[RMDB]
RNA sequence: GGGAACGACUCGAGUAGAGUCGAAAAGAUAUGGACCCGCAGGGAGCAGUGUUCGGAAACGAACAUACUGCGAAGAACUGUAGGGUCCUAAGUCAAAGGUCCAUGAAAGUUCGCUUUCAUGGACCAAGUUUACGGAUAUCUUCGGAUAUCCGUAAACAAAAGAAACAACAACAACAAC
Reactivity to DMS in 0.01 (KOAc 150mM, MgCl2 10mM, bicine 150mM(pH8.5), 24C), signal-to-noise 3, nucleotides 027 to 126: g000a010u000a040u010g010g010a010c000c000c010g000c000a020g000g000g000a010g020c000a010g000u000g000u000u010c000g020g000a000a010a020c000g000a010a000c000a040u000a090c060u000g010c000g000a110a180g000a210a300c000u000g010u000a060g050g010g000u000c000c000u000a000a080g000u000c010a080a190a140g000g010u000c000c000a010u010g000a010a010a000g010u000u030c270g020c000u000u000u000c000a010u000g010g000a000c000c000a000a020
Reactivity to 2A3 in 0.01 (KOAc 150mM, MgCl2 10mM, bicine 150mM(pH8.5), 24C), signal-to-noise 3, nucleotides 027 to 126: g000a000u020a010u030g000g000a000c010c010c010g020c010a010g040g020g020a040g000c000a000g020u000g000u020u000c000g000g010a000a000a000c000g000a000a010c000a000u150a070c020u010g000c000g090a240a020g030a000a000c010u030g010u300a300g040g010g000u000c000c000u000a000a000g010u000c000a050a050a130g010g000u000c000c000a000u000g030a000a000a000g090u180u240c300g040c230u010u010u000c000a000u000g000g010a000c000c000a000a000